[RMDB]
RNA sequence: GGGAACGACUCGAGUAGAGUCGAAAAUAUAUAGGUAUAGAGAUAGAUAUAGAAUGGGGUUCUAUUGUAAACGCCCGAAUAGAACCCUGUUCAAGUGGUCCGUCCACUGAUGUCGGGUUUAGGGCAACGAGUAUCACACUUUCGAGUGUGGUAUUCGAAAAGAAACAACAACAACAAC
Reactivity to 2A3 in 0.01 (KOAc 150mM, MgCl2 10mM, bicine 150mM(pH8.5), 24C), signal-to-noise 9, nucleotides 027 to 126: u180a000u050a020u070a050g060g050u060a070u110a140g050a010g030a050u080a080g040a030u090a030u040a210g020a060a010u020g000g000g000g000u000u000c000u000a010u010u040g100u130a100a180a060c110g030c000c020c010g010a000a000u000a000g000a000a000c000c000c000u000g010u000u010c020a010a020g030u010g040g020u040c090c110g060u040c020c020a020c030u050g040a070u080g060u090c060g030g030g000u030u090u160a080g020g010g000c010a030a010
Reactivity to DMS in 0.01 (KOAc 150mM, MgCl2 10mM, bicine 150mM(pH8.5), 24C), signal-to-noise 5, nucleotides 027 to 126: u030a060u020a080u020a070g010g010u010a080u010a080g010a110g000a110u020a050g000a100u020a070u010a090g000a010a010u000g010g000g000g000u000u000c000u000a000u000u010g010u020a060a130a130c200g010c030c020c030g000a020a010u000a000g000a000a000c000c000c000u000g000u000u000c000a080a040g020u010g000g010u020c110c140g010u010c010c020a020c020u000g010a050u010g000u000c040g000g010g000u000u010u010a070g010g000g010c040a090a200
An RNA of 177 nucleotides, treated with 2A3 and DMS and read out base by base.
The reactions ran in a buffer of 150 mM KOAc, 10 mM MgCl2 and 150 mM bicine (pH 8.5), at 24 C.
For 2A3 the reverse transcriptase was SuperScript II with manganese.
It was measured as part of the RMDB library OK1LIB.